[RMDB]
RNA sequence: GGGAACGACUCGAGUAGAGUCGAAAAGUAACAGUUAUGUGUAUCAACCGCAGUAUUUACCGAGAACCAUAGACGAAGCACACAAGUAUAAAGUUAUUGUAAGCGGAAGCCUUGGGGAUAGCAAUCAGGUUCAUAUCAAUUUUCUUGAGUAUAACAACUACGUUAUACUUUUCGAAGUAUAACGUAGAAAAGAAACAACAACAACAAC
Reactivity to DMS in 0.01 (KOAc 150mM, MgCl2 10mM, bicine 150mM(pH8.5), 24C), signal-to-noise 3, nucleotides 027 to 156: g040u000a080a110c050a080g000u000u000a060u000g020u000g040u010a090u000c050a080a100c030c020g000c060a110g020u010a120u010u010u000a130c040c030g010a150g030a100a110c030c030a100u000a070g020a080c050g020a150a150g020c050a050c070a040c050a050a100g020u000a140u000a070a090a140g020u000u000a010u000u010g000u000a070a110g030c010g010g020a120a140g020c050c030u000u000g010g010g030g010a110u000a060g020c060a060a080u000c060a080g030g010u000u000c060a050u000a060u000c060a040a100u000u000u000u010c050u010u000g000a120g030u000a110u000a090a070c050a050a180
Reactivity to 2A3 in 0.01 (KOAc 150mM, MgCl2 10mM, bicine 150mM(pH8.5), 24C), signal-to-noise 7, nucleotides 027 to 156: g060u050a070a030c020a060g010u120u090a090u110g090u020g050u040a060u190c060a070a050c040c010g000c030a010g020u060a100u100u120u070a070c040c040g020a020g010a100a030c020c020a040u050a060g070a040c030g040a070a010g030c020a010c000a000c010a080a050g060u050a050u100a220a110a040g030u090u080a080u100u160g050u040a100a010g030c020g030g030a070a010g030c010c030u070u070g020g000g000g020a030u060a020g010c020a020a050u070c020a020g020g020u030u020c010a010u040a040u160c050a090a090u050u080u130u030c030u040u090g040a050g050u160a080u140a260a050c040a030a030